[RMDB]
RNA sequence: GGGAACGACUCGAGUAGAGUCGAAAAGGAUCCUUAGUAGUCAGGGUAACUGCCACCUGUACAGUUACCAGUGAUGACUAGUCAAUGUGUCAUCGUACAGGUGGAUGACGUAUUGAAAUAAGGAUCGCUACACGUAUGUAUUCGUACAUACGUGUAGAAAAGAAACAACAACAACAAC
Reactivity to 2A3 in 0.01 (KOAc 150mM, MgCl2 10mM, bicine 150mM(pH8.5), 24C), signal-to-noise 7, nucleotides 027 to 126: g030g000a000u000c000c000u010u010a030g030u000a000g000u030c020a020g040g030g010u010a020a010c010u020g030c010c020a110c020c060u040g060u060a010c000a010g000u010u010a010c000c020a020g040u040g090a100u040g010a010c010u010a020g050u010c010a000a020u020g020u010g000u010c000a010u000c010g050u100a060c040a070g020g170u050g090g000a000u010g000a000c010g010u010a020u010u020g010a020a010a050u060a000a000g000g000a000u000c000g000
Reactivity to DMS in 0.01 (KOAc 150mM, MgCl2 10mM, bicine 150mM(pH8.5), 24C), signal-to-noise 9, nucleotides 027 to 126: g000g000a010u000c000c000u000u000a050g020u000a030g010u000c010a060g010g000g010u000a020a030c030u010g010c100c050a120c200c130u000g010u000a230c000a030g010u000u000a010c010c010a120g020u010g010a100u000g010a030c040u000a080g010u000c020a020a010u000g010u000g000u000c010a010u000c010g030u000a050c150a080g000g010u010g010g000a010u000g000a010c010g010u000a020u000u000g000a030a230a130u000a020a010g010g000a010u000c000g000
Annotation:
An RNA of 177 nucleotides, treated with 2A3 and DMS and read out base by base. For 2A3 the reverse transcriptase was SuperScript II with manganese. The reactions ran in a buffer of 150 mM KOAc, 10 mM MgCl2 and 150 mM bicine (pH 8.5), at 24 C. For DMS, 41,610 sequencing reads were counted.